[RMDB]
RNA sequence: GGGAACGACUCGAGUAGAGUCGAAAAGGUUAGAUAUUUGAGCUGUUCAAUAACUCAGAGAAGCCUUUGACUUUGUGGAAAAGGUUUAAAGGAUUUAAAAGAUCUAUUGCUGUACAGCUAUCUCUGGUAGCCCCUACUAUUUCGAUAGUAGGGGCUAAAAAGAAACAACAACAACAAC
Reactivity to DMS in 0.01 (KOAc 150mM, MgCl2 10mM, bicine 150mM(pH8.5), 24C), signal-to-noise 1, nucleotides 027 to 126: g000g000u000u010a090g010a160u010a120u000u020u000g000a070g000c010u000g010u000u000c030a030a010u000a020a100c160u010c070a020g020a300g020a070a110g000c000c000u000u000u000g000a070c000u000u000u000g010u010g000g000a140a060a040a010g020g000u000u000u000a020a010a010g000g010a070u030u010u000a020a100a180a150g000a050u000c060u000a030u000u010g010c300u000g000u000a010c070a060g020c010u000a040u000c030u000c070u000g000g000